[RMDB]
RNA sequence: GGGAACGACUCGAGUAGAGUCGAAAAGUACUAUGCCCGCCAUUAUUGAUGCAUGCUCCACCUCCCACUCCUUAAUAGUUGCUUUGAAGUUUCCUUUCGGUGGGUUCUGCAGCCUCUUUAUCAGAAAGAGUUGUUAACAAUUCGUUGUUAACAACUCAAAAGAAACAACAACAACAAC
Reactivity to DMS in 0.01 (KOAc 150mM, MgCl2 10mM, bicine 150mM(pH8.5), 24C), signal-to-noise 4, nucleotides 027 to 126: g020u000a070c100u000a070u010g010c030c010c020g010c070c070a060u010u010a080u000u000g010a070u000g010c050a060u000g020c040u000c030c030a070c040c020u000c030c020c030a110c070u000c020c030u000u000a060a070u000a080g010u000u000g010c040u000u010u010g010a070a180g000u000u010u010c020c020u000u000u000c070g000g020u000g010g010g000u000u010c030u010g010c040a070g000c050c010u000c070u010u020u000a070u000c080a090g000a110a100a110
Conditions: 150 mM KOAc, 10 mM MgCl2 and 150 mM bicine (pH 8.5), 24 C. Chemical mapping of a 177-nucleotide RNA with DMS.